[RMDB]
RNA sequence: GGGAACGACUCGAGUAGAGUCGAAAAGAAGAGCCGGGCUAACAAAGGUGGGAGGCACCCAACCCUUCGCAAGACCCGAGUGGGAAGGCUAAGCGAAACCAAGACAAAAUGGUUAUAAAUAAUGCAAGAUAACUUAAGAAUUCGUUCUUAAGUUAUCAAAAGAAACAACAACAACAAC
Reactivity to 2A3 in 0.01 (KOAc 150mM, MgCl2 10mM, bicine 150mM(pH8.5), 24C), signal-to-noise 3, nucleotides 027 to 126: g040a040a010g010a000g000c020c020g000g050g000c020u050a090a030c020a110a070a030g020g000u040g020g010g010a070g040g000c030a070c000c000c010a030a110c010c000c000u020u030c050g030c060a070a030g040a100c020c000c040g020a030g040u120g000g030g020a050a020g030g000c030u060a070a000g030c020g050a020a000a000c000c010a020a020g130a090c070a050a150a000a080u050g040g000u040u040a090u080a130a080a030u190a060a060u140g020c000a100a010
Reactivity to DMS in 0.01 (KOAc 150mM, MgCl2 10mM, bicine 150mM(pH8.5), 24C), signal-to-noise 6, nucleotides 027 to 126: g000a150a090g010a120g030c030c050g010g000g000c050u010a080a090c090a060a070a070g000g030u000g010g010g000a060g010g010c100a040c040c010c020a070a130c090c030c010u010u000c040g000c060a070a100g000a090c030c020c000g010a120g020u010g010g000g010a100a060g000g010c050u010a080a120g000c070g020a070a030a040c010c010a040a080g000a120c150a060a060a100a080u000g000g010u010u000a090u020a050a060a070u010a060a070u010g010c090a080a100
This 177-nucleotide RNA was probed chemically with 2A3 and DMS. Reactivities are given for positions 27 through 126. DMS adducts were read by reverse transcription with MarathonRT. The 2A3 profile rests on 5,442 reads. The reactions ran in a buffer of 150 mM KOAc, 10 mM MgCl2 and 150 mM bicine (pH 8.5), at 24 C. The DMS profile rests on 5,309 reads.